[RMDB]
RNA sequence: GGGAACGACUCGAGUAGAGUCGAAAAGGCGCGAACGGCGCGAUCGACACGACGACGGCGACCGCCCCCGUCGAAGUGAUCGUGCUGACGAACGCCGGCCUGAUGGGCGACGUGUCGAUCAGCGGCAGGUCACGUAGCUAUUCGUAGCUACGUGACCAAAAGAAACAACAACAACAAC
Reactivity to 2A3 in 0.01 (KOAc 150mM, MgCl2 10mM, bicine 150mM(pH8.5), 24C), signal-to-noise 2, nucleotides 027 to 126: g030g000c030g010c010g070a140a020c000g020g000c000g000c020g020a010u020c050g090a030c030a010c100g060a000c010g000a000c040g000g030c020g090a100c020c160g000c010c000c000c000c010g000u010c000g020a090a030g010u020g040a040u010c020g000u040g020c020u030g050a110c030g010a070a000c010g020c000c030g020g010c010c010u060g070a050u090g080g000g120c060g050a220c230g180u210g040u120c000g040a120u050c070a040g050c040g050g020c050a060
Reactivity to DMS in 0.01 (KOAc 150mM, MgCl2 10mM, bicine 150mM(pH8.5), 24C), signal-to-noise 3, nucleotides 027 to 126: g030g020c010g040c040g000a220a140c020g020g010c000g040c030g000a010u000c070g020a170c190a130c030g000a220c010g010a040c090g010g020c100g010a150c120c150g010c030c030c140c020c010g010u010c000g000a050a200g020u010g000a030u000c000g030u010g020c000u010g000a140c080g010a110a020c020g040c000c000g000g010c040c010u000g000a040u000g000g000g000c050g010a100c080g010u020g020u000c000g020a120u010c090a040g020c030g000g020c120a070